[RMDB]
RNA sequence: GGGAACGACUCGAGUAGAGUCGAAAAAGAAGCUCGAAAGCAUGGGGAUAAGGAAGGAUGCAAAGGGAAUCUCGAUUCAGACUCUCAGACACCUGGAAUCCCUGCUGAGAGUCCAGCGGGAGCAGAACAUAACUGCAUCGUUCGCGAUGCAGUUAUGAAAAGAAACAACAACAACAAC
Reactivity to 2A3 in 0.01 (KOAc 150mM, MgCl2 10mM, bicine 150mM(pH8.5), 24C), signal-to-noise 2, nucleotides 027 to 126: a000g090a020a000g020c010u030c050g040a100a020a030g020c030a030u060g020g030g010g010a050u050a120a020g070g050a050a030g010g000a030u060g020c020a050a100a010g020g040g040a040a090u050c030u010c040g030a030u060u020c020a030g020a030c000u000c000u000c030a010g030a100c010a050c040c030u020g010g010a020a030u050c020c010c000u010g020c000u010g000a010g000a000g000u000c010c010a010g010c040g000g010g020a060g070c030a020g070a070a030
Reactivity to DMS in 0.01 (KOAc 150mM, MgCl2 10mM, bicine 150mM(pH8.5), 24C), signal-to-noise 4, nucleotides 027 to 126: a110g010a170a110g020c020u000c050g010a100a050a090g000c040a040u000g020g010g020g010a080u010a100a120g020g010a120a050g010g000a040u000g000c060a070a090a120g000g010g010a050a040u000c010u010c080g000a130u010u010c180a080g010a030c020u000c000u000c030a030g010a170c060a050c050c030u010g000g000a150a130u000c000c010c010u000g000c010u000g000a120g000a030g010u000c010c080a040g000c070g000g020g000a070g020c070a060g010a060a150